Chemical mapping of a 207-nucleotide RNA with 2A3. The reactions ran in a buffer of 150 mM KOAc, 10 mM MgCl2 and 150 mM bicine (pH 8.5), at 24 C. Source: RMDB library VIROID, as collected in RNAgym.

RNA sequence: GGGAACGACUCGAGUAGAGUCGAAAAACAGGAGUAAUCCCCGCUGAAACAGUGUUUUCACACUUCCUUUCUUCGGGUUUCCUUCCUCUGAGUCGACACCCUCGCCCGCCUUCUCUUGCGCUGUCGCUUCGGAUACUACCCGGUGGAAACAACUGAACAUUCUGGUUGAGUUCGCUCAACCAGAAUGAAAAGAAACAACAACAACAAC
Reactivity to 2A3 in 0.01 (KOAc 150mM, MgCl2 10mM, bicine 150mM(pH8.5), 24C), signal-to-noise 2, nucleotides 027 to 156: a000c020a010g000g020a010g020u040a040a060u030c020c000c000c000g020c000u020g000a010a000a060c280a200g020u070g060u040u150u210u200c190a020c000a000c000u000u020c010c000u000u020u010c030u010u020c010g000g000g010u000u020u010c020c000u040u020c030c000u020c130u110g030a020g020u030c010g060a050c000a070c110c010c010u020c030g000c000c000c000g030c020c000u030u020c030u050c000u020u060g040c000g020c060u020g020u100c030g010c070u070u050c040g100g000a030u090a160c030u080a080c050c010c010g030g060u070g010g070a070a120a020c060a020a100c080u080g020a030a000